[RMDB]
The record gives the reactivity of an RNA of 177 nucleotides to DMS and 2A3.
The DMS profile rests on 6,025 reads.
The 2A3 profile rests on 7,799 reads.
Conditions: 150 mM KOAc, 10 mM MgCl2 and 150 mM bicine (pH 8.5), 24 C.
RNA sequence: GGGAACGACUCGAGUAGAGUCGAAAAAGCAGUCGAUUCGUCGACUGCUAAUGGGUCGCGACUACAUCACAGGUUCUUCGCUAGCCCUCUUUGGACCAGUAAAAAAGAGCUUAUUCGUAAGCUCUAAUACCAUGUGCUAAUUCGUUAGCACAUGGUAAAAAGAAACAACAACAACAAC
Reactivity to DMS in 0.01 (KOAc 150mM, MgCl2 10mM, bicine 150mM(pH8.5), 24C), signal-to-noise 5, nucleotides 027 to 126: a020g010c000a010g010u000c000g010a040u000u010c170g020u000c000g010a010c000u000g000c000u000a010a030u000g010g010g020u000c210g000c030g000a110c090u000a060c080a060u000c140a080c220a110g010g000u010u000c030u000u000c040g030c030u000a100g000c010c010c010u000c100u000u010u010g000g010a150c020c020a080g020u010a000a050a070a110a100a020g000a010g000c010u000u000a030u000u000c150g010u000a000a000g000c000u000c000u000a040a080
Reactivity to 2A3 in 0.01 (KOAc 150mM, MgCl2 10mM, bicine 150mM(pH8.5), 24C), signal-to-noise 3, nucleotides 027 to 126: a000g000c000a000g010u000c010g030a020u060u080c100g050u010c010g100a020c010u000g000c000u000a000a040u040g020g000g010u060c010g000c000g030a030c030u080a020c040a100u170c090a030c040a150g140g000u090u030c010u050u010c010g020c020u040a060g000c000c010c010u040c070u070u080u070g030g030a040c020c030a040g160u200a020a090a040a040a040a000g010a000g000c010u010u020a010u050u070c140g070u020a000a000g000c000u000c000u000a000a010